[RMDB]
RNA sequence: GGGAACGACUCGAGUAGAGUCGAAAAGAUAUGGAGAGAUCCUGAACUACUCUUUCCCAUCGGAAACGAUGGGUAGGAGCAGGAGUCUCUCCUAAGUCAAACAGUAAGGAGUUCGCUCCUUACUGAACAUUUACUUUUGGUUCGCCAAAAGUAAAUGAAAAGAAACAACAACAACAAC
Reactivity to 2A3 in 0.01 (KOAc 150mM, MgCl2 10mM, bicine 150mM(pH8.5), 24C), signal-to-noise 3, nucleotides 027 to 126: g030a010u090a060u160g000g010a010g000a000g000a010u010c010c010u020g010a070a060c110u230a110c010u150c000u050u050u030c020c000c000a000u010c000g020g020a080a080a050c020g000a000u000g000g010g000u000a020g000g000a010g000c000a010g000g020a050g110u010c000u000c010u000c000c000u000a020a000g030u010c040a070a070a120c000a000g000u020a010a010g000g020a020g030u100u170c230g120c130u000c000c000u000u000a000c000u000g000a000a000
Reactivity to DMS in 0.01 (KOAc 150mM, MgCl2 10mM, bicine 150mM(pH8.5), 24C), signal-to-noise 8, nucleotides 027 to 126: g000a040u000a300u010g000g010a030g010a020g010a230u000c010c000u000g010a080a070c090u010a300c010u000c030u000u000u000c000c000c000a000u010c000g010g010a170a060a260c010g010a000u000g000g000g030u000a000g000g000a020g000c010a010g000g000a040g010u000c000u000c010u010c000c000u000a020a080g010u000c040a170a130a300c010a010g000u000a000a000g000g000a020g030u010u010c300g020c000u000c000c000u000u000a000c000u000g000a070a170
This 177-nucleotide RNA was probed chemically with 2A3 and DMS. DMS adducts were read by reverse transcription with MarathonRT. Source: RMDB library TTRDES, as collected in RNAgym. For 2A3, 14,268 sequencing reads were counted. The RNA was probed in 150 mM KOAc, 10 mM MgCl2 and 150 mM bicine (pH 8.5) at 24 C. For DMS, 11,887 sequencing reads were counted.